[RMDB]
RNA sequence: GGGAACGACUCGAGUAGAGUCGAAAAGAUAUGGACGGCAUAUACAGCGCAGAUAAACUUCGGAAACGAAGUUUGUAGCUGUAUGGCCGUCCUAAGUCAAACAGAACGGUGUUCGCACCGUUCUGAACAAUCAACCCUUGUUCGCAAGGGUUGAUUGAAAAGAAACAACAACAACAAC
Reactivity to DMS in 0.01 (KOAc 150mM, MgCl2 10mM, bicine 150mM(pH8.5), 24C), signal-to-noise 4, nucleotides 027 to 126: g020a040u000a300u010g000g010a010c000g020g000c000a080u020a010u000a000c000a000g000c010g040c230a180g030a080u010a040a010a010c000u000u000c010g000g000a160a110a280c000g000a010a010g010u000u000u000g020u000a130g020c000u020g000u000a000u000g000g010c010c000g000u000c000c000u000a000a060g010u000c050a150a110a300c000a010g000a000a010c000g010g010u000g010u010u020c280g030c000a010c000c000g000u000u000c000u000g010a100a140
Reactivity to 2A3 in 0.01 (KOAc 150mM, MgCl2 10mM, bicine 150mM(pH8.5), 24C), signal-to-noise 1, nucleotides 027 to 126: g040a000u070a040u130g000g010a000c000g040g090c050a130u010a000u020a300c000a030g000c040g040c130a020g070a300u230a130a050a020c000u020u010c020g030g030a030a120a050c000g010a000a000g000u020u040u010g020u030a030g000c020u000g010u010a010u000g010g000c020c010g000u010c000c030u000a000a010g000u000c010a000a010a040c010a000g000a000a010c000g000g010u010g060u120u170c300g010c150a000c010c000g000u000u000c000u010g010a010a000